[RMDB]
RNA sequence: GGGAACGACUCGAGUAGAGUCGAAAAGAUAUGGAGGAGCGAUGAGGAAAGGUGCUAGGGAGAAUGACAUCGGAAACGAUGUGAUUCGAAGAACUAGCACCUUUCCUCAUCGACUCCUCCUAAGUCACAUGAGAUGAUUGUUCGCAAUCAUCUCAUGAAAAGAAACAACAACAACAAC
Reactivity to DMS in 0.01 (KOAc 150mM, MgCl2 10mM, bicine 150mM(pH8.5), 24C), signal-to-noise 3, nucleotides 027 to 126: g020a050u000a300u000g000g020a010g030g010a010g020c000g010a000u000g020a040g010g000a000a020a000g000g050u010g000c000u010a010g000g000g030a140g000a010a000u000g000a010c000a020u000c000g020g000a190a120a300c010g020a020u010g030u010g010a000u000u000c020g010a090a190g000a170a160c010u000a010g040c000a000c010c000u000u000u000c000c000u000c010a000u000c000g000a030c000u000c000c000u010c000c000u000a000a040g010u000c040a280
Annotation
This 177-nucleotide RNA was probed chemically with DMS. Values cover nucleotides 27 to 126. The RNA was probed in 150 mM KOAc, 10 mM MgCl2 and 150 mM bicine (pH 8.5) at 24 C. It was measured as part of the RMDB library TTRINS. The DMS profile rests on 3,705 reads.